[RMDB]
RNA sequence: GGGAACGACUCGAGUAGAGUCGAAAAACUAGGAAAACUGCUGAUAAGUACCAAGGCCUGCAAGCCAAGGAGGAAAGCUGUGCAGUUUGGGGGAGGCAAGACAGACUCAUUCUUAAAGCUUCAUCAUUUGGCUUCUUUCCCAGCCUGUACCCAGAAAAUAUAGCAUCCAGUUCGCUGGAUGCUAUAUAAAAGAAACAACAACAACAAC
Reactivity to 2A3 in 0.01 (KOAc 150mM, MgCl2 10mM, bicine 150mM(pH8.5), 24C), signal-to-noise 2, nucleotides 027 to 156: a000c070u110a100g040g000a080a120a000a100c020u030g010c000u010g050a100u050a170a060g040u020a070c010c030a080a000g000g030c020c100u110g060c110a040a000g000c000c020a020a030g010g020a010g000g000a040a010a010g050c060u040g110u080g020c030a030g040u040u050u030g000g020g000g000g000a010g000g020c050a070a000g050a050c080a040g010a130c040u030c070a070u270u040c060u130u090a150a160a020g000c000u050u050c020a120u000c020a070u150u070u140g020g000c000u080u000c000u040u170u040c000c000c000a010g010c010c000u020g020u060a050c030c000c000a010g100a040a100a020
Reactivity to DMS in 0.01 (KOAc 150mM, MgCl2 10mM, bicine 150mM(pH8.5), 24C), signal-to-noise 1, nucleotides 027 to 156: a070c050u000a100g000g040a080a020a030a100c000u000g040c030u020g040a140u000a050a140g020u010a090c010c010a060a160g020g010c020c010u030g070c220a090a140g000c040c050a170a240g000g010a120g020g010a120a110a030g020c060u000g010u000g050c050a030g010u000u000u000g020g000g000g030g010a020g100g010c050a020a100g030a070c130a090g000a080c060u020c070a140u000u000c060u040u010a040a080a100g010c010u000u010c050a170u010c060a230u000u020u000g010g010c000u000u000c000u000u000u000c000c000c000a060g000c020c000u000g020u000a080c000c010c040a300g000a100a140a220
Conditions: 150 mM KOAc, 10 mM MgCl2 and 150 mM bicine (pH 8.5), 24 C. The record gives the reactivity of an RNA of 207 nucleotides to 2A3 and DMS. For DMS, 1,349 sequencing reads were counted. It was measured as part of the RMDB library OK3TST. For 2A3, 717 sequencing reads were counted.